[RMDB]
RNA sequence: GGGAACGACUCGAGUAGAGUCGAAAAUCGGGUGUGCAAGACAUAGCUGUUCCCACAUGGAUGAAUCUUUGUAAACCAGCAACCUGCGACAUUCUUUUGCCAAAGGCUAAUGUGCCAUCAACAUUCAACAUCGCAACAGUUUCGACUGUUGCGAUGUAAAAGAAACAACAACAACAAC
Reactivity to DMS in 0.01 (KOAc 150mM, MgCl2 10mM, bicine 150mM(pH8.5), 24C), signal-to-noise 2, nucleotides 027 to 126: u040c050g010g030g010u000g010u000g030c050a090a100g000a170c080a090u000a050g000c020u010g020u000u010c000c000c020a140c140a090u010g000g000a060u000g010a050a040u000c040u020u030u010g030u000a060a100a110c040c010a010g000c050a050a030c010c040u000g030c130g020a050c070a060u000u000c090u000u010u000u000g010c010c030a020a190a070g010g000c020u000a020a080u010g050u020g000c080c020a050u000c110a020a100c170a050u010u010c150a060
Reactivity to 2A3 in 0.01 (KOAc 150mM, MgCl2 10mM, bicine 150mM(pH8.5), 24C), signal-to-noise 2, nucleotides 027 to 126: u160c020g000g040g000u040g020u050g000c020a050a120g090a060c000a060u120a050g090c030u030g030u040u010c000c160c010a010c020a020u060g050g000a000u040g080a150a120u120c060u030u080u130g090u130a110a110a050c050c000a010g000c010a030a050c000c030u000g050c020g010a000c020a080u110u080c000u100u150u080u090g060c040c010a060a020a050g050g010c000u090a170a000u070g010u060g050c000c000a030u090c060a040a030c000a050u000u170c010a070